[RMDB]
This 177-nucleotide RNA was probed chemically with 2A3 and DMS. For 2A3, 4,680 sequencing reads were counted. 2A3 is a SHAPE reagent: it acylates the 2'-hydroxyl of flexible nucleotides of all four kinds.
RNA sequence: GGGAACGACUCGAGUAGAGUCGAAAAUCUUAUUGUUUUAAUUAUUGCAGCAUUCCUCUUCACUGGCGGAAACGCUGACAAGCCUCAAAACAUUACCAUGAUUAAGGAGAAUACUUAUGGCUUAACAAUAUUUAAUGGCAUUCGUGCCAUUAAAUAUAAAAGAAACAACAACAACAAC
Reactivity to 2A3 in 0.01 (KOAc 150mM, MgCl2 10mM, bicine 150mM(pH8.5), 24C), signal-to-noise 6, nucleotides 027 to 126: u070c020u050u060a120u070u080g020u020u040u040u070a110a110u100u170a120u080u100g010c010a000g010c010a020u020u000c000c010u030c020u170u100c120a150c250u110g030g010c010g000g020a020a020a050c090g010c000u020g060a100c020a010a000g050c030c000u160c080a040a030a010a030c030a040u040u130a100c020c050a050u110g040a150u190u130a110a050g040g040a090g100a110a130u100a110c050u080u070a040u160g110g010c010u050u040a090a020c040a090
Reactivity to DMS in 0.01 (KOAc 150mM, MgCl2 10mM, bicine 150mM(pH8.5), 24C), signal-to-noise 5, nucleotides 027 to 126: u040c010u030u040a050u010u000g000u010u000u010u000a020a100u030u030a170u010u010g010c030a020g010c030a140u000u000c010c000u000c040u000u010c210a100c190u010g020g000c080g010g010a020a060a060c130g000c020u000g020a060c080a020a030g020c140c130u020c150a040a040a040a030c060a030u010u010a070c020c010a100u020g010a090u020u030a090a090g000g000a180g000a130a090u020a060c110u000u000a050u020g000g010c090u000u000a070a080c120a070